[RMDB]
The record gives the reactivity of an RNA of 207 nucleotides to 2A3. Conditions: 150 mM KOAc, 10 mM MgCl2 and 150 mM bicine (pH 8.5), 24 C. 2A3 adducts were read by reverse transcription with SuperScript II with manganese. For 2A3, 843 sequencing reads were counted.

RNA sequence: GGGAACGACUCGAGUAGAGUCGAAAACGGUUCACGCCUGAUAGACCGGUGAGACGUAACUUCAUCAGGCUGGCAUCUGACGGCGCUCGCCGCGAAGGGUGCGAGAAAAACAGGUGAGCUGGUCGAAGGUUGCCUGGUCGGGGGCGAAACCUGAGAUGGUACACCACAAGUUCGCUUGUGGUGUACCAAAAGAAACAACAACAACAAC
Reactivity to 2A3 in 0.01 (KOAc 150mM, MgCl2 10mM, bicine 150mM(pH8.5), 24C), signal-to-noise 1, nucleotides 027 to 156: c010g000g000u040u040c080a000c040g010c000c000u050g050a160u050a040g000a000c010c010g010g040u090g030a100g070a020c080g060u190a140a020c040u100u110c040a040u000c030a000g140g020c010u010g110g010c020a000u000c010u040g030a130c040g050g080c040g000c050u010c040g060c050c020g010c050g070a100a090g050g070g010u070g020c000g010a050g000a070a070a020a000a000c050a000g000g000u010g030a040g020c020u030g020g080u050c090g010a020a000g070g050u040u050g000c000c020u060g070g000u020c020g120g070g010g010g000c010g010a020a020a000c030c000u020g000a030g000a010u060